Overview
This 177-nucleotide RNA was probed chemically with 2A3 and DMS. The RNA was probed in 150 mM KOAc, 10 mM MgCl2 and 150 mM bicine (pH 8.5) at 24 C. It was measured as part of the RMDB library M2PK90. For 2A3 the reverse transcriptase was SuperScript II with manganese.
RNA sequence: GGGAACGACUCGAGUAGAGUCGAAAACAUAUGACGGAGAGUGGAUCACUCAGCGGAAACGCAUCCAAUGUCUGAAGUCUUUAAUGGGUAUAACAGUCAGUUGACCCAGAUCCCAACAGACAAUAAAUCUCCAUGUUUCUUUCGAGAAACAUGGAGAAAAAGAAACAACAACAACAAC
Reactivity to 2A3 in 0.01 (KOAc 150mM, MgCl2 10mM, bicine 150mM(pH8.5), 24C), signal-to-noise 1, nucleotides 027 to 126: c040a070u120a130u190g070a030c070g040g040a010g000a010g090u070g060g180a130u190c030a000c000u010c000a050g000c010g000g030a030a030a020c000g000c010a000u050c010c010a070a180u090g010u010c000u040g040a060a020g030u010c000u010u010u020a090a080u010g050g020g000u030a120u020a300a050c040a030g300u240c050a050g000u190u010g010a010c000c000c000a000g030a010u050c000c000c010a000a030c010a010g030a000c000a050a000u120a030a140a040
Reactivity to DMS in 0.01 (KOAc 150mM, MgCl2 10mM, bicine 150mM(pH8.5), 24C), signal-to-noise 2, nucleotides 027 to 126: c030a100u000a040u000g030a030c050g000g020a080g040a090g060u000g040g040a130u010c060a080c070u000c040a140g000c010g000g000a050a070a040c050g010c060a300u010c020c020a090a060u000g000u010c000u000g030a230a130g000u000c040u000u000u000a140a140u000g000g000g020u000a050u020a000a000c010a150g000u030c300a090g040u000u000g020a000c020c000c040a020g060a100u000c010c010c000a080a160c040a030g020a000c050a020a080u000a070a020a080